[RMDB]
RNA sequence: GGGAACGACUCGAGUAGAGUCGAAAAACCAUCCUAUUCGUAGGAUGGUGCACCAUUGCCGAUUGUAUAUAAUACCGCAGGGGGAAAAGCGGUUCAAAUAAGGAACUUGUCAGUUCGCUGACAAGAAGAUCACUUUUAGAUUCGUCUAAAAGUGAUCAAAAGAAACAACAACAACAAC
Reactivity to DMS in 0.01 (KOAc 150mM, MgCl2 10mM, bicine 150mM(pH8.5), 24C), signal-to-noise 9, nucleotides 027 to 126: a030c000c000a010u000c000c000u000a030u000u010c180g020u000a010g000g000a010u000g000g010u000g010c130a170c020c020a130u010u000g020c030c030g010a130u000u000g010u000a080u010a080u000a110a110u000a050c010c030g020c030a110g010g010g010g020g000a080a060a080a110g000c020g000g000u000u010c130a040a070a070u010a080a130g000g000a100a150c000u000u000g000u000c000a010g010u000u010c200g010c010u000g000a010c000a000a010g000a060a080
Reactivity to 2A3 in 0.01 (KOAc 150mM, MgCl2 10mM, bicine 150mM(pH8.5), 24C), signal-to-noise 9, nucleotides 027 to 126: a000c000c000a000u000c000c000u020a040u050u100c230g070u060a000g000g000a000u000g000g000u010g000c020a050c030c010a070u040u210g080c020c010g120a100u080u060g100u040a080u020a020u020a270a230u120a060c010c010g000c070a130g050g030g010g070g000a030a070a030a020g000c000g000g000u010u060c040a050a050a040u130a120a100g060g010a030a090c000u000u000g000u000c000a010g010u010u080c200g010c080u000g000a000c010a000a000g010a010a010